[RMDB]
RNA sequence: GGGAACGACUCGAGUAGAGUCGAAAAUAGCCGGCAUCGGCCGCGAUAUUAAUGCCGCGUAAUAUGCUAGCGCAUCGUACGUAUACGCGUACGGCCGCGCGGCCGCGUAUAUACGGCCGUAUACGCGAGUUAGCGGACCAUUCGUGGUCCGCUAACUAAAAGAAACAACAACAACAAC
Reactivity to 2A3 in 0.01 (KOAc 150mM, MgCl2 10mM, bicine 150mM(pH8.5), 24C), signal-to-noise 1, nucleotides 027 to 126: u080a020g040c090c000g030g000c020a050u050c010g000g050c050c000g020c090g090a080u010a120u300u220a080a030u080g010c020c020g030c050g010u000a030a030u110a010u240g060c030u090a210g060c020g000c040a030u040c060g010u000a010c050g000u050a140u060a300c160g040c000g040u000a000c000g000g000c090c050g000c000g060c080g020g000c030c000g020c030g010u010a000u060a000u020a040c000g000g010c030c000g000u000a010u020a040c010g060c000g000
Reactivity to DMS in 0.01 (KOAc 150mM, MgCl2 10mM, bicine 150mM(pH8.5), 24C), signal-to-noise 1, nucleotides 027 to 126: u010a170g020c100c010g000g010c110a110u000c040g000g020c000c040g000c160g000a160u000a110u010u000a040a030u010g000c000c020g000c100g000u000a020a090u000a020u000g010c040u000a110g010c130g020c070a040u000c000g000u000a010c000g000u010a140u010a080c270g030c010g000u000a000c000g020g000c300c070g040c040g010c000g030g010c030c010g020c140g000u010a010u000a030u000a080c000g000g000c000c050g010u000a060u000a030c020g020c020g000